The record gives the reactivity of an RNA of 207 nucleotides to 2A3 and DMS. High DMS reactivity at an A or C suggests that its Watson-Crick edge is free. Reactivities are rounded to 0.1 and cut off at 0 and 3.

RNA sequence: GGGAACGACUCGAGUAGAGUCGAAAAGACGAAGGCUUCGGCCUUCGUCAAAUCCUAAGUCAGCAACAGCUCUGAGAACAGCGAUGAAAUGUCGGAAACGACAUGGAGCUGACAGAGACAUGCUGAUAUGGAAAACGCAGAGGCUUCGGCCUCUGCGACCAAGCUAGAGAUUCGUCUCUAGCUUGGUAAAAGAAACAACAACAACAAC
Reactivity to 2A3 in 0.01 (KOAc 150mM, MgCl2 10mM, bicine 150mM(pH8.5), 24C), signal-to-noise 3, nucleotides 027 to 156: g000a000c010g000a010a000g020g000c010u060u100c200g070g010c000c000u010u000c000g000u010c000a000a000a000u010c000c000u020a110a020g020u010c000a000g020c000a020a090c020a150g030c040u000c000u000g180a210g130a300a130c010a010g000c000g100a150u040g010a040a030a010u000g010u000c010g000g060a090a080a040c010g000a000c000a000u010g010g010a010g000c030u020g040a060c010a000g010a000g000a050c030a040u020g010c000u010g010a000u000a050u060g030g030a070a100a010a010c030g000c020a010g010a010g000g000c020u170u270c300g100g000c010c000u000c010u000g000c000g010
Reactivity to DMS in 0.01 (KOAc 150mM, MgCl2 10mM, bicine 150mM(pH8.5), 24C), signal-to-noise 2, nucleotides 027 to 156: g010a020c010g010a010a000g030g030c000u000u010c300g040g000c000c000u000u010c000g000u000c000a000a060a100u010c020c000u000a070a300g040u000c010a070g010c000a020a090c050a220g010c030u040c000u010g010a170g000a150a180c010a020g000c000g000a210u020g010a170a110a010u000g000u000c010g000g010a140a140a270c000g020a010c000a000u030g000g000a160g050c000u000g030a070c000a000g030a010g000a050c070a300u010g010c000u010g000a050u000a140u000g040g000a080a050a050a280c030g040c030a050g020a050g040g000c020u000u000c300g010g030c000c000u000c000u000g000c010g000